Chemical mapping of a 177-nucleotide RNA with 2A3 and DMS. For 2A3 the reverse transcriptase was SuperScript II with manganese. DMS adducts were read by reverse transcription with MarathonRT. Source: RMDB library TTRDEL, as collected in RNAgym. The RNA was probed in 150 mM KOAc, 10 mM MgCl2 and 150 mM bicine (pH 8.5) at 24 C.
RNA sequence: GGGAACGACUCGAGUAGAGUCGAAAAGAUAUGGAUGGGAGCGAUAAGUAAUGUUCGGAAACGAACAUUUACUUUUGACGCUCAGUCCUAAGUCAAACGAUUUGCACAGUUCGCUGUGCAAAUCGAACCAAUUAACCGUGUUCGCACGGUUAAUUGGAAAAGAAACAACAACAACAAC
Reactivity to 2A3 in 0.01 (KOAc 150mM, MgCl2 10mM, bicine 150mM(pH8.5), 24C), signal-to-noise 2, nucleotides 027 to 126: g000a030u050a030u100g030g010a000u040g220g300g000a000g010c020g060a090u050a300a040g010u000a000a000u010g000u020u020c010g000g010a040a060a020c000g010a010a000c010a000u030u060u010a000c010u020u040u030u110g100a040c010g010c000u000c000a010g000u000c000c000u010a070a020g040u010c050a090a020a100c040g010a000u000u020u000g000c000a000c020a010g020u090u090c260g050c170u000g000u000g000c000a000a010a000u000c010g000a010a020
Reactivity to DMS in 0.01 (KOAc 150mM, MgCl2 10mM, bicine 150mM(pH8.5), 24C), signal-to-noise 3, nucleotides 027 to 126: g000a030u000a210u010g010g010a030u010g010g010g020a010g020c000g020a120u010a010a030g020u000a000a010u000g010u000u000c000g010g010a050a060a130c000g010a020a000c000a000u000u000u000a010c010u000u000u000u000g020a230c030g000c010u010c000a300g000u000c000c000u010a050a160g000u000c030a120a120a180c010g000a010u000u000u000g020c010a010c000a010g010u000u010c240g030c000u000g000u000g000c000a000a010a010u000c000g040a050a100